This 177-nucleotide RNA was probed chemically with DMS and 2A3. 2A3 adducts were read by reverse transcription with SuperScript II with manganese. The DMS profile rests on 1,256 reads. Reactivities are rounded to 0.1 and cut off at 0 and 3. DMS adducts were read by reverse transcription with MarathonRT.
RNA sequence: GGGAACGACUCGAGUAGAGUCGAAAACUCUAUUAAUGAUACGUUCAUUAAUAAACGUAGGACAUGUUAGUUAUAAAGGUGUAUUCAUAUUAUUAAAAACACUAGUUCACAGCGACCACUAGCUCUCCAUCAUAGACCGUUUCGACGGUCUAUGAUGAAAAGAAACAACAACAACAAC
Reactivity to DMS in 0.01 (KOAc 150mM, MgCl2 10mM, bicine 150mM(pH8.5), 24C), signal-to-noise 2, nucleotides 027 to 126: c010u000c020u000a000u000u000a010a000u000g000a040u010a180c170g010u000u000c020a030u000u000a030a010u010a010a030a070c130g010u010a090g030g020a070c070a050u020g000u000u000a050g000u010u010a080u000a080a040a120g000g010u010g000u010a130u010u010c050a050u000a110u000u000a150u020u010a020a070a110a040a010c040a020c050u000a070g000u000u000c060a020c060a130g010c060g000a100c070c020a030c080u000a040g010c050u010c040u050c040
Reactivity to 2A3 in 0.01 (KOAc 150mM, MgCl2 10mM, bicine 150mM(pH8.5), 24C), signal-to-noise 1, nucleotides 027 to 126: c000u060c000u020a000u070u000a010a000u030g010a020u080a040c150g070u080u030c000a000u030u010a020a010u060a030a040a020c020g030u080a100g000g000a070c050a070u120g030u150u100a040g050u110u070a160u160a100a140a050g120g010u030g010u030a120u070u080c010a010u150a040u250u210a090u060u180a210a160a010a030a000c010a020c060u000a040g000u110u030c060a000c020a070g030c050g000a020c000c040a020c000u000a040g010c000u000c010u000c020
The RNA was probed in 150 mM KOAc, 10 mM MgCl2 and 150 mM bicine (pH 8.5) at 24 C. Values cover nucleotides 27 to 126.